[RMDB]
RNA sequence: GGGAACGACUCGAGUAGAGUCGAAAAGGGGCAACCAGUGACCUUUCUGGUGGAUACGGGAGCCCAGCACUCGGUACUGACUCGACCAGAUGGACCUCUCAGUGACCGCUCAGCCCUGGUGCAAGGAUGACCCCGUGUGAUUCGUCACACGGGGUCAAAAAGAAACAACAACAACAAC
Reactivity to 2A3 in 0.01 (KOAc 150mM, MgCl2 10mM, bicine 150mM(pH8.5), 24C), signal-to-noise 1, nucleotides 027 to 126: g010g000g000g000c000a000a000c000c000a010g060u040g240a130c000c020u050u250u070c070u080g060g080u040g020g000a020u020a170c060g000g030g000a040g000c000c050c000a000g010c000a000c020u040c000g000g000u020a080c020u100g030a000c020u100c040g050a110c000c060a050g040a130u050g010g090a080c010c010u000c000u000c000a000g000u000g090a140c010c000g010c000u070c050a070g000c000c000c030u030g020g000u000g000c010a020a030g070g010a110
Reactivity to DMS in 0.01 (KOAc 150mM, MgCl2 10mM, bicine 150mM(pH8.5), 24C), signal-to-noise 1, nucleotides 027 to 126: g050g010g050g030c040a180a020c000c000a020g040u010g060a150c000c000u000u000u010c080u020g000g040u000g060g100a160u070a000c000g030g000g040a300g000c000c000c000a080g080c090a000c050u000c240g000g010u010a050c080u080g000a040c060u000c110g000a210c020c000a300g000a120u000g000g020a020c010c040u070c210u000c000a020g000u030g040a000c000c080g000c000u000c000a030g000c200c000c000u000g030g000u020g000c040a090a080g050g000a160

The record gives the reactivity of an RNA of 177 nucleotides to 2A3 and DMS. The reactions ran in a buffer of 150 mM KOAc, 10 mM MgCl2 and 150 mM bicine (pH 8.5), at 24 C. It was measured as part of the RMDB library OK1LIB.